[RMDB]
RNA sequence: GGGAACGACUCGAGUAGAGUCGAAAAGAACCCUCGAUCCUUUAUUGGGGGGUACACUCGAGGAGUGGAAGGCGGGGAGGAGGGGGCUGAGGGCUAACCUACGGAAAUUCCUGAGCUCCCCUGACGUGUAGCUAGAAGUUCGCUUCUAGCAAAAGAAACAACAACAACAAC
Reactivity to 2A3 in 0.01 (KOAc 150mM, MgCl2 10mM, bicine 150mM(pH8.5), 24C), signal-to-noise 6, nucleotides 027 to 129: g030a030a040c000c030c000u010c010g080a150u110c040c090u230u300u250a170u220u130g010g000g000g000g000g000u060a050c060a030c080u070c070g080a060g000g030a050g010u130g030g050a080a020g070g030c050g020g010g000g020a090g010g000a080g000g000g000g000g000c030u060g010a040g010g000g000c020u030a060a100c010c020u050a040c020g020g050a010a060a050u110u040c000c000u000g010a020g000c000u050c000c000c000c000u000g030a020c030g090u110g030u110a020
Reactivity to DMS in 0.01 (KOAc 150mM, MgCl2 10mM, bicine 150mM(pH8.5), 24C), signal-to-noise 6, nucleotides 027 to 129: g040a090a090c040c010c000u000c030g010a130u030c100c100u040u040u080a120u050u020g010g000g020g030g020g010u000a030c150a070c080u020c040g030a120g050g030a040g010u000g030g040a070a050g020g050c070g000g000g000g000a110g000g000a090g000g000g000g000g000c070u000g020a050g030g020g000c080u040a090a100c070c030u040a100c150g010g040a050a050a100u020u010c020c030u020g010a050g020c060u000c010c010c020c030u000g010a050c050g020u020g020u020a110